[RMDB]
Source: RMDB library OK1LIB, as collected in RNAgym. Structure probing data (DMS and 2A3) for a 177-nucleotide construct. The 2A3 profile rests on 742 reads.

RNA sequence: GGGAACGACUCGAGUAGAGUCGAAAAUUCAGGGUGUCCAAGACUACAUCAAUAAUGAGCUGAUACCGUCUAUGAACCAACUAUCUUGUGAUUUAAUCGGCCAGAAGCUAGGGCUCAAAUUGCUCAGUCACCCACUUUCGUUCGCGAAAGUGGGUGAAAAAGAAACAACAACAACAAC
Reactivity to DMS in 0.01 (KOAc 150mM, MgCl2 10mM, bicine 150mM(pH8.5), 24C), signal-to-noise 1, nucleotides 027 to 126: u000u010c130a090g000g000g000u000g100u000c080c060a090a150g000a020c040u000a080c060a010u000c020a010a080u000a110a150u090g000a080g020c030u000g000a060u000a160c010c050g000u000c000u000a130u000g020a020a070c190c050a070a050c070u000a050u020c000u000u000g000u000g000a180u000u000u030a120a140u000c120g000g030c070c020a000g000a110a050g030c060u030a010g010g010g000c090u070c130a000a020a080u000u030g000c060u010c010a070g060
Reactivity to 2A3 in 0.01 (KOAc 150mM, MgCl2 10mM, bicine 150mM(pH8.5), 24C), signal-to-noise 2, nucleotides 027 to 126: u110u100c070a030g090g000g020u020g000u020c000c040a030a000g120a070c060u160a030c050a040u030c090a040a260u180a060a040u130g060a000g060c000u020g000a000u020a060c000c000g020u010c060u090a220u000g020a000a010c000c000a000a010c020u060a120u300c010u090u150g010u050g130a060u000u120u130a030a110u040c030g000g090c000c050a010g060a060a000g010c120u300a130g000g000g000c000u000c010a030a090a070u290u110g030c030u010c000a060g010
Record summary: For 2A3 the reverse transcriptase was SuperScript II with manganese.